Chemical mapping of a 170-nucleotide RNA with 2A3 and DMS. DMS adducts were read by reverse transcription with MarathonRT. For 2A3, 6,852 sequencing reads were counted. The DMS profile rests on 19,062 reads.
RNA sequence: GGGAACGACUCGAGUAGAGUCGAAAAAAUAAACUUCGCGUUGUAAUUCCUGACUUCACCGUCUGGAAUCAGGUAGUCACAUAUCCCUCGCUUAACUACGCUGGGGCUUUGUGGGACAUUACAGUUAUCAGGUGUAUCUUCGGAUACACCAAAAGAAACAACAACAACAAC
Reactivity to 2A3 in 0.01 (KOAc 150mM, MgCl2 10mM, bicine 150mM(pH8.5), 24C), signal-to-noise 5, nucleotides 027 to 129: a000a000u300a030a040a020c040u150u110c170g030c080g100u020u070g100u080a020a040u050u050c000c000u010g030a000c000u040u040c070a020c060c090g080u090c050u060g020g020a030a020u060c010a000g000g090u060a020g040u040c000a010c000a020u030a020u030c030c020c000u010c010g040c000u110u150a190a070c120u130a100c200g000c020u020g000g000g020g000c020u010u040u020g010u020g000g020g010a020c010a020u080u120a030c010a030g060u080u040a210u230c080a030
Reactivity to DMS in 0.01 (KOAc 150mM, MgCl2 10mM, bicine 150mM(pH8.5), 24C), signal-to-noise 4, nucleotides 027 to 129: a080a060u070a000a030a050c100u000u000c100g030c300g000u000u000g040u000a090a060u000u020c000c010u030g030a040c000u000u000c140a060c220c240g060u020c010u000g000g000a000a000u020c120a060g020g040u020a040g000u020c000a000c050a050u000a020u010c030c020c010u020c300g030c020u030u050a130a120c210u060a040c180g000c040u000g000g020g050g000c130u000u020u010g000u040g010g040g020a030c120a080u000u050a040c130a070g000u000u000a090u060c120a070